[RMDB]
RNA sequence: GGGAACGACUCGAGUAGAGUCGAAAAAACUCAGCUAGGGAGAGUAUAACAUUCAUGUUGACGAGACCUAGACGUAACACAGAGGAAAAUUAUUAAUCACUGGAUAGUAUUAGUAAUGACUCUGUGUAAAACUCUUCUACGUUCGCGUAGAAGAGAACAUCAAAUAAAGCUUCGGCUUUAUUUGAUGAAAAGAAACAACAACAACAAC
Reactivity to 2A3 in 0.01 (KOAc 150mM, MgCl2 10mM, bicine 150mM(pH8.5), 24C), signal-to-noise 3, nucleotides 027 to 156: a000a000c010u020c010a010g030c000u010a000g000g020g010a040g020a040g070u070a130u100a300a030c040a050u100u180c050a100u260g030u090u080g050a020c020g020a030g050a050c000c000u000a010g010a030c020g000u020a030a000c010a000c000a010g010a020g010g050a110a140a110a000u010u010a000u000u000a010a010u030c060a000c060u070g090g040a170u300a300g000u010a000u000u000a010g010u020a000a000u020g020a030c000u000c000u020g000u000g000u010a000a000a000a000c000u000c000u000u010c000u000a010c000g020u010u040c240g010c000g080u000a000g000a000a000g000a000g000a010a000
Reactivity to DMS in 0.01 (KOAc 150mM, MgCl2 10mM, bicine 150mM(pH8.5), 24C), signal-to-noise 1, nucleotides 027 to 156: a000a040c030u000c040a090g040c000u010a040g020g010g040a220g020a300g000u000a110u000a100a040c060a080u000u000c180a100u010g020u000u000g000a140c010g000a300g000a030c010c010u000a020g010a260c110g010u020a140a040c010a040c010a020g010a030g010g020a080a090a060a030u000u000a000u000u000a040a020u000c090a090c050u000g010g010a170u000a110g020u000a010u000u000a040g010u000a010a010u000g010a200c020u010c000u010g000u000g030u000a010a010a040a140c000u010c000u010u010c010u000a000c010g020u000u010c280g010c000g050u000a000g000a000a010g010a010g000a040a120
Conditions: 150 mM KOAc, 10 mM MgCl2 and 150 mM bicine (pH 8.5), 24 C. An RNA of 207 nucleotides, treated with 2A3 and DMS and read out base by base. Values cover nucleotides 27 to 156. It was measured as part of the RMDB library M2RFPK. The 2A3 profile rests on 1,717 reads. Values are in units of 0.01, from 0 to 300, in steps of 10.